[RMDB]
RNA sequence: GGGAACGACUCGAGUAGAGUCGAAAAAGAGCUUUGCGAGACCUACCAAGGGUGAAGAGGUACCAUCCAAGGAGCUGAAGAGAAAUCUCACUUUAGACGCCUGGGGAACUCGGACUAAAUUAAAAAAAAAACAUCAACCCGUUCGCGGGUUGAUGAAUCUGAUAUUAAUGUUCGCAUUAAUAUCAGAAAAAGAAACAACAACAACAAC
Reactivity to 2A3 in 0.01 (KOAc 150mM, MgCl2 10mM, bicine 150mM(pH8.5), 24C), signal-to-noise 1, nucleotides 027 to 156: a000g070a000g050c070u060u130u040g030c020g030a030g000a120c000c000u070a130c040c070a030a080g060g000g010u060g040a030a080g010a030g010g000u100a090c010c010a010u010c010c030a000a040g000g000a000g010c030u040g030a080a000g000a020g130a120a100a150u080c060u030c040a010c030u000u050u130a030g030a220c090g040c080c060u030g000g000g000g020a020a090c010u010c130g080g040a000c080u120a070a120a200u240u300a050a040a040a000a000a000a000a000a000a000c000a010u000c000a010a000c000c000c000g010u010u050c140g030c000g040g000g000u020u020g000a000u000g010a000a050

The record gives the reactivity of an RNA of 207 nucleotides to 2A3. Source: RMDB library M2RFPK, as collected in RNAgym. The RNA was probed in 150 mM KOAc, 10 mM MgCl2 and 150 mM bicine (pH 8.5) at 24 C. For 2A3, 523 sequencing reads were counted.